[RMDB]
RNA sequence: GGGAACGACUCGAGUAGAGUCGAAAAUCGCAUGGUGAAUCCCCCUGUGUGGAGGGGCGACUGGUGAAAAAUCCUUGCUUGUGAUUCAUUAUCGACACGGGUUCGGUGGUACCAGGCCGAACUCACCGUAAUGUAAGUCCUUCGGGACUUACAUUACAAAAGAAACAACAACAACAAC
Reactivity to 2A3 in 0.01 (KOAc 150mM, MgCl2 10mM, bicine 150mM(pH8.5), 24C), signal-to-noise 9, nucleotides 027 to 126: u070c020g020c070a020u040g020g000u010g020a020a020u030c010c010c000c000c010u040g060u050g110u160g270g200a060g010g010g000g000c000g010a010c000u010g000g020u030g020a020a010a000a000a030u100c010c010u020u040g020c020u110u250g100u230g080a010u000u010c010a000u010u040a030u060c060g040a060c060a050c210g000g000g000u000u000c000g000g000u010g000g020u010a010c010c000a010g010g010c000c000g000a000a000c000u000c010a010c000c040
Reactivity to DMS in 0.01 (KOAc 150mM, MgCl2 10mM, bicine 150mM(pH8.5), 24C), signal-to-noise 3, nucleotides 027 to 126: u030c020g010c110a020u020g010g020u000g000a040a020u010c000c020c030c010c000u030g020u030g030u030g020g000a070g010g000g000g010c020g000a020c000u000g000g020u000g020a040a220a040a090a140u030c000c000u000u000g000c020u010u020g010u070g000a020u000u030c010a040u000u010a010u000c050g040a090c140a130c110g010g000g010u000u010c010g000g010u000g010g010u000a020c010c010a030g000g010c000c020g000a030a000c010u000c000a030c150c090